[RMDB]
RNA sequence: GGGAACGACUCGAGUAGAGUCGAAAAGACUACGUAGAAGGCUGUAUCUGACUUAGAGAGCUGUAUGGCUGACAGAACACUGUCAGCUGGAUACUUGGCAAGUCAGGAAUACUUGGCACGUAGAGAAGAUACAGUUUAAUUUCGAUUGGACUGUAUCAAAAGAAACAACAACAACAAC
Reactivity to 2A3 in 0.01 (KOAc 150mM, MgCl2 10mM, bicine 150mM(pH8.5), 24C), signal-to-noise 9, nucleotides 027 to 126: g010a010c000u000a000c000g020u030a030g050a220a020g130g010c030u020g010u020a030u010c000u000g010a010c000u030u080a050g040a010g020a010g170c040u030g020u030a020u030g010g000c000u000g000a000c000a000g030a110a060c300a070c160u000g000u000c000a000g000c000u000g000g010a000u010a020c000u050u050g030g000c020a000a000g000u000c000a000g000g040a030a010u020a010c010u030u040g040g000c010a000c000g000u000a000g010a010g020a070a010
Reactivity to DMS in 0.01 (KOAc 150mM, MgCl2 10mM, bicine 150mM(pH8.5), 24C), signal-to-noise 9, nucleotides 027 to 126: g000a190c010u000a000c000g000u000a070g010a140a050g010g010c130u020g020u010a040u010c000u000g000a030c010u000u000a080g010a300g000a040g000c200u010g010u010a110u020g000g000c000u000g010a000c000a000g000a220a140c300a110c020u000g000u000c000a000g000c000u000g000g000a070u010a040c000u010u000g000g030c180a020a010g010u000c000a000g000g000a090a050u010a030c010u010u010g000g000c190a040c000g000u000a010g000a140g010a130a090
Chemical mapping of a 177-nucleotide RNA with 2A3 and DMS. 2A3 adducts were read by reverse transcription with SuperScript II with manganese. The reactions ran in a buffer of 150 mM KOAc, 10 mM MgCl2 and 150 mM bicine (pH 8.5), at 24 C. Reactivities are given for positions 27 through 126.